An RNA of 177 nucleotides, treated with DMS and read out base by base. For DMS the reverse transcriptase was MarathonRT. The reactions ran in a buffer of 150 mM KOAc, 10 mM MgCl2 and 150 mM bicine (pH 8.5), at 24 C. The data come from the RNA Mapping Database (RMDB), library OK2TST.
RNA sequence: GGGAACGACUCGAGUAGAGUCGAAAAUUCAUUUUAACGGUUGUUGCAGUUAUAGCAACAUGGGUUAUUCCUGCUGGUGCAUAUUCUAAACUUUCUUACGAACCUUCAUCCCAAGAACUAAAGAUAGAACGCCCUUAUAUUUCGAUAUAAGGGCGUUAAAAGAAACAACAACAACAAC
Reactivity to DMS in 0.01 (KOAc 150mM, MgCl2 10mM, bicine 150mM(pH8.5), 24C), signal-to-noise 2, nucleotides 027 to 126: u010u030c120a130u010u010u000u010a040a070c150g020g000u010u000g020u000u020g020c000a090g010u010u030a110u020a210g000c010a010a010c000a010u030g000g020g020u000u000a050u000u000c000c020u000g000c040u000g020g020u000g000c110a090u000a060u000u000c080u000a040a050a100c030u000u000u010c040u000u000a080c080g010a060a060c030c030u000u000c060a130u000c000c010c010a060a070g030a050a060c150u010a040a060a150g000a120u010a070g010